[RMDB]
RNA sequence: GGGAACGACUCGAGUAGAGUCGAAAAUAUUUCCUUCAUGCAGUGCAUAGAAUAAUGUUUUCAUACUCACUUUACCCUCAGGUGCUUCAAACUAACUUAGUUUGAUUUUUCGUUGCCUGCGGGCCAUCCUUACAUGGAAAUUCGUUUCCAUGUAAGGAAAAGAAACAACAACAACAAC
Reactivity to DMS in 0.01 (KOAc 150mM, MgCl2 10mM, bicine 150mM(pH8.5), 24C), signal-to-noise 5, nucleotides 027 to 126: u010a060u000u000u000c080c050u010u010c040a030u000g010c000a170g020u020g020c020a000u000a100g000a060a030u010a050a040u010g000u000u000u000u000c040a140u010a100c060u000c010a090c110u010u010u010a280c010c000c000u000c010a010g000g020u000g000c050u000u000c010a000a000a010c010u000a070a150c290u020u010a020g010u000u000u000g000a020u020u020u010u010u010c210g020u030u010g000c010c000u000g010c140g000g000g010c170c170a050u010
Reactivity to 2A3 in 0.01 (KOAc 150mM, MgCl2 10mM, bicine 150mM(pH8.5), 24C), signal-to-noise 9, nucleotides 027 to 126: u110a030u010u030u020c020c000u010u050c020a020u030g010c030a040g200u040g150c010a020u060a130g060a070a050u240a150a070u110g080u040u050u030u050c070a070u090a120c020u040c050a040c020u110u150u150a040c000c000c000u010c010a000g010g000u010g020c020u020u010c000a000a000a000c000u040a060a170c060u140u130a030g010u010u000u010g040a060u050u020u010u080u170c100g080u090u090g020c000c000u000g000c040g000g000g000c000c010a030u010